Description
Conditions: 150 mM KOAc, 10 mM MgCl2 and 150 mM bicine (pH 8.5), 24 C. This 177-nucleotide RNA was probed chemically with DMS and 2A3.

[RMDB]
RNA sequence: GGGAACGACUCGAGUAGAGUCGAAAAACGUGCCAGGUUAACCGACCGUUAAGGUUUCCGAUUUAUAACAACAACCAUCCAGUCUUCUGGAUGCCGAGUGGCUCCUGUCCACUCUGUUUGACGCCUCACUAUGCUUACGCUUCGGCGUAAGCAUAGUAAAAGAAACAACAACAACAAC
Reactivity to DMS in 0.01 (KOAc 150mM, MgCl2 10mM, bicine 150mM(pH8.5), 24C), signal-to-noise 2, nucleotides 027 to 126: a000c060g040u000g020c020c060a080g010g030u000u000a080a080c050c070g000a080c050c040g000u000u000a090a080g000g010u020u000u000c010c020g020a160u010u000u010a100u010a110a030c080a010a040c140a040a100c300c000a000u000c000c000a000g000u010c220u010u010c020u000g000g000a030u000g000c190c080g000a040g010u000g000g020c050u010c170c070u010g040u010c000c000a020c000u000c010u000g010u000u000u010g010a090c180g010c110c050u000c050
Reactivity to 2A3 in 0.01 (KOAc 150mM, MgCl2 10mM, bicine 150mM(pH8.5), 24C), signal-to-noise 1, nucleotides 027 to 126: a030c050g050u110g040c020c030a100g000g070u100u120a070a080c050c050g040a040c000c040g100u060u080a120a020g020g110u030u000u060c000c010g040a060u030u140u130a250u140a090a050c060a000a000c010a050a030c010c000a000u020c020c010a010g130u100c090u300u080c000u180g020g000a020u010g030c020c030g040a010g010u000g010g020c060u070c080c080u160g050u030c010c000a000c010u070c010u010g050u000u020u170g030a040c000g070c020c030u080c000
For DMS the reverse transcriptase was MarathonRT.